Record summary:
Chemical mapping of a 207-nucleotide RNA with DMS and 2A3. 2A3 adducts were read by reverse transcription with SuperScript II with manganese. The reactions ran in a buffer of 150 mM KOAc, 10 mM MgCl2 and 150 mM bicine (pH 8.5), at 24 C. For DMS, 2,048 sequencing reads were counted. It was measured as part of the RMDB library OK3TST.
RNA sequence: GGGAACGACUCGAGUAGAGUCGAAAAAACUAAAGAUAAUGUACUACAAGUUAACCCAGGUUAUGUGUACAUAAAUGGUAAGAUACGUUACUAUAAUAGUGAAGACACUGUUAAAAUUACGGGUGUAGGUAAAGAAACAGUAGGUAUUAAACUAACACAAUCUGUAUCGGUUCGCCGAUACAGAUUGAAAAGAAACAACAACAACAAC
Reactivity to DMS in 0.01 (KOAc 150mM, MgCl2 10mM, bicine 150mM(pH8.5), 24C), signal-to-noise 1, nucleotides 027 to 156: a070a060c020u010a000a030a180g000a210u000a110a040u000g010u000a030c020u010a020c040a050a060g000u000u000a050a060c000c010c000a260g050g000u010u000a020u000g020u000g010u000a030c010a070u000a040a030a060u000g000g000u000a050a110g000a070u000a050c090g000u000u000a090c050u000a170u030a090a050u000a060g000u000g030a080a180g020a300c010a010c030u030g000u000u000a020a100a080a040u000u000a040c060g000g030g040u000g020u000a080g020g020u000a020a040a120g000a190a060a060c010a030g040u050a050g060g020u000a060u000u000a080a120a050c100u000a050a060c070a090
Reactivity to 2A3 in 0.01 (KOAc 150mM, MgCl2 10mM, bicine 150mM(pH8.5), 24C), signal-to-noise 3, nucleotides 027 to 156: a000a020c180u270a180a110a000g130a190u230a190a030u100g010u010a010c010u010a010c040a070a000g000u020u010a030a000c010c010c000a010g100g000u050u010a020u040g010u000g010u020a000c000a000u070a030a150a050u080g010g010u060a040a040g030a160u120a120c040g030u070u030a000c020u030a030u110a210a120u070a080g040u040g150a060a030g060a030c010a000c040u000g000u010u010a080a150a130a130u070u050a030c050g010g040g000u060g020u050a010g010g050u010a030a030a070g030a010a060a010c010a000g060u060a050g010g030u010a020u030u130a110a090a040c020u050a050a010c050a000